[RMDB]
This 177-nucleotide RNA was probed chemically with 2A3 and DMS.
RNA sequence: GGGAACGACUCGAGUAGAGUCGAAAAAGUGUAUGCCUACCCAGAGUAGGAAACCCAGCAAGUAUGCGUCGCUUCCACCUUGAACUUAAGGGUUCAAGGGUAAUGACAGGCAGCGGCAUCUUCGGAGAACACGUUUCUGUUUCGACAGAAACGUGUUAAAAGAAACAACAACAACAAC
Reactivity to 2A3 in 0.01 (KOAc 150mM, MgCl2 10mM, bicine 150mM(pH8.5), 24C), signal-to-noise 3, nucleotides 027 to 126: a000g120u120g050u110a090u220g040c000c000u010a000c000c000c030a070g020a050g030u020a000g000g000a050a060a060c010c010c030a020g070c050a030a090g020u150a040u040g090c100g110u080c010g030c000u010u000c010c000a040c030c010u020u000g000a010a010c000u110u060a140a180g280g010g000u010u000c000a000a010g010g010g010u070a080a130u160g120a040c060a070g000g000c010a000g000c000g010g000c010a000u000c000u040u030c030g000g070a170g060
Reactivity to DMS in 0.01 (KOAc 150mM, MgCl2 10mM, bicine 150mM(pH8.5), 24C), signal-to-noise 3, nucleotides 027 to 126: a080g000u030g010u000a060u000g000c000c010u010a010c010c010c280a120g010a130g000u000a030g000g000a030a050a100c000c000c030a130g000c170a070a070g010u030a030u010g010c050g010u010c030g020c030u010u000c000c010a220c000c000u000u000g020a010a000c000u000u020a150a100g010g000g000u000u000c000a010a000g000g000g020u020a030a100u030g000a130c220a090g000g000c040a020g060c000g000g000c000a040u000c030u000u020c030g000g000a250g030
Record summary
For 2A3 the reverse transcriptase was SuperScript II with manganese. Source: RMDB libraries RFM100 and RFMREP, as collected in RNAgym.